[RMDB]
RNA sequence: GGGAACGACUCGAGUAGAGUCGAAAACAACUGUUAUCUUGCCACUGCAUUGUUAACACUCCAACAAAUAGAUUUGAAGUUUAAUCCACCUGCUCUACAAAGGGCUGGUGAAGCUGCUAACUUUUGUACGGCUCUGCCUUCGGGCAGAGCAAAAGAAACAACAACAACAAC
Reactivity to 2A3 in 0.01 (KOAc 150mM, MgCl2 10mM, bicine 150mM(pH8.5), 24C), signal-to-noise 4, nucleotides 027 to 129: c030a010a030c040u030g000u080u100a080u050c030u030u060g000c020c030a130c060u100g000c010a000u010u060g070u030u070a050a000c000a040c060u030c030c010a000a000c010a010a120a020u200a040g220a240u000u010u080g020a030a030g050u000u110u120a060a030u060c010c000a000c000c000u040g000c000u000c020u040a110c140a100a260a070g000g000g000c000u010g000g010u000g010a000a000g020c040u000g010c050u000a030a000c000u010u010u030u040g020u060a000c020g030
Reactivity to DMS in 0.01 (KOAc 150mM, MgCl2 10mM, bicine 150mM(pH8.5), 24C), signal-to-noise 3, nucleotides 027 to 129: c070a060a060c150u090g040u020u020a000u130c010u000u020g020c000c080a040c170u020g000c030a110u060u010g000u000u010a080a060c010a000c160u100c000c040a190a020c010a030a040a150u080a120g040a060u170u000u010g080a160a020g030u000u010u120a040a000u000c080c070a000c010c000u080g030c090u000c040u060a100c300a220a050a140g070g000g060c010u000g020g060u000g040a090a090g020c010u060g060c020u040a030a130c060u020u000u000u070g060u030a060c140g010
An RNA of 170 nucleotides, treated with 2A3 and DMS and read out base by base. The RNA was probed in 150 mM KOAc, 10 mM MgCl2 and 150 mM bicine (pH 8.5) at 24 C.